[RMDB]
RNA sequence: GGGAACGACUCGAGUAGAGUCGAAAAGAUAUGGAGGUUACUGUUCAUCGAUCUUAUCCCUCUCGGAAACGAGAGGGAGUAAGGGAGAAUGGUAACCUCCUAAGUCAAAGCAGCCUUCGGGCUGCAAGUAGACUUAAGACUUCGGUCUUAAGUCUACAAAAGAAACAACAACAACAAC
Reactivity to 2A3 in 0.01 (KOAc 150mM, MgCl2 10mM, bicine 150mM(pH8.5), 24C), signal-to-noise 3, nucleotides 027 to 126: g030a010u080a050u110g000g000a000g020g010u010u020a010c000u020g050u030u010c060a270u300c230g140a090u080c020u010u020a030u020c000c020c010u050c000u000c000g060g000a140a090a070c010g000a000g010a000g030g000g000a000g000u030a000a000g030g010g010a060g000a010a000u000g000g000u000a010a000c000c000u000c000c000u000a000a000g000u010c000a010a000a030g000c000a000g000c000c000u070u090c160g120g010g000c000u000g000c010a000a000
Reactivity to DMS in 0.01 (KOAc 150mM, MgCl2 10mM, bicine 150mM(pH8.5), 24C), signal-to-noise 4, nucleotides 027 to 126: g020a050u000a300u010g010g010a020g010g010u000u010a000c000u010g010u000u000c020a290u000c250g000a100u010c000u000u000a010u000c000c000c000u010c000u000c000g000g000a160a140a190c010g030a010g000a000g000g000g000a010g010u000a000a010g010g000g010a030g020a020a000u000g000g000u000a000a000c010c000u010c000c000u000a000a050g000u000c030a130a120a220g000c000a010g010c000c010u000u010c200g040g020g000c000u000g010c000a010a040
Source: RMDB library TTRDES, as collected in RNAgym. This 177-nucleotide RNA was probed chemically with 2A3 and DMS. The DMS profile rests on 4,050 reads. 2A3 adducts were read by reverse transcription with SuperScript II with manganese. Reactivities are rounded to 0.1 and cut off at 0 and 3.